RNA sequence: GGGAACGACUCGAGUAGAGUCGAAAACACAGUUUGGGAUCUGGACAAACAAUUGCCAUGGCAACCAUUAUCUCCAGCAAUUUGUAUGCUUUGCUCAUUUUUGUUCCACUUUUGGAAAGCAUUAGUGGAGAGAACAGAUUUUCGAAUCUGUUCUCUCAAAAGAAACAACAACAACAAC
Reactivity to 2A3 in 0.01 (KOAc 150mM, MgCl2 10mM, bicine 150mM(pH8.5), 24C), signal-to-noise 4, nucleotides 027 to 126: c050a000c010a040g050u060u100u050g020g000g010a050u000c030u060g030g040a020c030a040a130a000c010a030a100u040u060g000c020c020a070u140g080g000c030a050a050c030c010a030u160u040a060u110c050u000c030c030a000g000c010a070a060u000u050u210g070u050a080u090g000c000u010u060u030g030c000u010c060a090u040u070u070u110u150g020u060u020c030c010a060c060u090u060u080u060g060g090a230a080a020g100c010a020u050u060a040g050u060g100
Reactivity to DMS in 0.01 (KOAc 150mM, MgCl2 10mM, bicine 150mM(pH8.5), 24C), signal-to-noise 4, nucleotides 027 to 126: c070a100c090a100g010u000u010u010g000g010g010a090u010c070u020g020g010a080c100a040a050a070c120a060a100u010u000g000c030c050a080u000g010g020c090a050a080c080c030a090u010u010a100u000c060u000c020c020a030g000c080a050a070u000u000u000g010u000a060u000g000c020u000u000u000g020c030u030c050a090u010u000u000u010u010g010u000u000c000c000a050c100u000u000u000u000g010g000a120a110a170g010c020a010u000u000a040g020u010g020